[RMDB]
Annotation:
Conditions: 150 mM KOAc, 10 mM MgCl2 and 150 mM bicine (pH 8.5), 24 C. This 177-nucleotide RNA was probed chemically with 2A3 and DMS. It was measured as part of the RMDB library OK2TST. Values cover nucleotides 27 to 126. For DMS, 7,125 sequencing reads were counted. The 2A3 profile rests on 4,450 reads.
RNA sequence: GGGAACGACUCGAGUAGAGUCGAAAAAGCUAACAUACUUGAUUAUGAUUUAACUAUCAAAAUAGCAAAAAGUGAUAUCAUUACUUGUAAUAACGCCUACUUAGUACGUGAUAUAAACACUAUAGGCAAUAUUUCCUAGUUUCGACUAGGAAAUAUUAAAAGAAACAACAACAACAAC
Reactivity to 2A3 in 0.01 (KOAc 150mM, MgCl2 10mM, bicine 150mM(pH8.5), 24C), signal-to-noise 4, nucleotides 027 to 126: a010g060c050u050a070a020c010a100u150a060c030u080u060g060a110u160u150a030u090g020a030u010u090u110a050a060c030u030a020u100c030a000a100a160a150u130a040g050c040a030a050a150a080a000g030u040g010a030u010a020u110c010a000u000u020a010c010u010u020g020u060a040a060u080a180a050c060g010c000c010u030a030c050u110u070a000g010u020a040c080g020u020g050a020u020a000u080a220a150a000c030a000c030u050a040u030a080g030g000c000
Reactivity to DMS in 0.01 (KOAc 150mM, MgCl2 10mM, bicine 150mM(pH8.5), 24C), signal-to-noise 7, nucleotides 027 to 126: a090g020c040u000a040a110c100a080u010a060c060u000u000g000a120u000u000a060u000g010a120u000u000u010a110a110c080u010a060u010c070a060a040a070a110u000a070g010c050a060a080a070a070a060g010u000g000a090u000a020u000c020a020u000u000a030c010u000u000g000u010a040a050u010a080a080c240g020c090c050u000a030c110u010u000a030g010u000a020c290g030u000g000a020u010a040u000a080a020a300c030a010c020u000a050u000a110g010g010c070